[RMDB]
RNA sequence: GGGAACGACUCGAGUAGAGUCGAAAAGGCAGCUUUACGAGCAGGCAUAUUACCUGUGUCUACAUACCAAACACGACGGUCAGGAGCACGAGUAAUACGAUAAAUGACUACAGCAUCUUCUAAUAAUUUUAAUUGGUUAGCAGGUUUAACAGCACGAGAAAAAUGAAGCAUUCGUGCUUCAUUUUUCAAAAGAAACAACAACAACAAC
Reactivity to DMS in 0.01 (KOAc 150mM, MgCl2 10mM, bicine 150mM(pH8.5), 24C), signal-to-noise 2, nucleotides 027 to 156: g010g030c030a070g010c040u000u010u010a090c080g020a300g010c010a060g000g030c000a110u010a100u000u000a030c030c000u030g020u000g010u010c020u010a070c080a100u000a120c020c030a120a110a120c070a140c110g000a070c060g030g020u000c060a040g000g050a220g010c050a030c040g010a110g010u020a030a080u000a090c070g000a150u010a080a040a100u010g030a120c010u000a080c020a030g010c030a050u000c040u010u000c030u020a050a080u020a060a140u010u000u000u010a050a190u000u000g020g000u000u000a090g030c010a080g010g000u010u000u000a030a040c010a080g040c040a080c080g010a300
Reactivity to 2A3 in 0.01 (KOAc 150mM, MgCl2 10mM, bicine 150mM(pH8.5), 24C), signal-to-noise 4, nucleotides 027 to 156: g070g010c020a010g000c050u080u120u170a100c080g040a000g010c010a010g030g000c040a030u060a100u130u150a060c010c030u020g000u010g050u030c020u070a050c020a110u180a060c030c020a030a130a050c060a010c090g150a020c120g000g030u050c030a060g040g080a020g020c030a020c060g030a020g030u060a020a080u090a090c020g030a020u100a100a100a020u100g030a030c040u040a030c120a030g010c010a050u010c020u090u000c030u020a060a050u050a120a070u200u050u110u160a070a160u080u090g020g010u010u010a020g020c010a010g020g090u050u080u100a020a020c010a010g060c000a010c060g080a090